[RMDB]
RNA sequence: GGGAACGACUCGAGUAGAGUCGAAAACUGCACUUGGAAGACUUGCUAUCUAAGUCAUUAUGGGCAAAAGGGACCCUAUGGCUUAGGGGAAAGUCCCCGGACACUGGGUAGAGAGUACCUGGGGUGUUUGAUAAAAACCGUUCGCGGUUUUUAUCAAAAAAGAAACAACAACAACAAC
Reactivity to 2A3 in 0.01 (KOAc 150mM, MgCl2 10mM, bicine 150mM(pH8.5), 24C), signal-to-noise 4, nucleotides 027 to 126: c020u050g010c030a030c070u030u090g030g010a100a040g000a040c010u000u010g010c010u060a150u250c000u000a010a000g020u010c000a010u080u200a100u220g000g000g020c040a060a070a150a250g060g060g130a250c000c000c000u010a000u010g020g000c000u000u000a000g020g000g000g010a060a000a020g000u000c000c000c010c020g130g050a050c050a030c070u030g010g000g000u040a020g040a010g010a030g250u000a000c000c000u020g020g000g020g020u060g020u050
Reactivity to DMS in 0.01 (KOAc 150mM, MgCl2 10mM, bicine 150mM(pH8.5), 24C), signal-to-noise 2, nucleotides 027 to 126: c030u030g000c120a050c060u020u000g030g010a120a240g000a010c010u000u000g000c020u020a080u040c010u000a010a010g010u000c000a020u010u070a060u060g020g000g060c070a100a100a100a170g030g000g000a170c000c010c000u000a010u020g000g000c010u000u010a000g000g000g000g020a050a040a080g000u000c000c020c010c030g000g000a050c000a210c000u000g000g000g000u000a010g020a190g020a220g030u020a020c000c000u020g040g010g000g010u000g010u000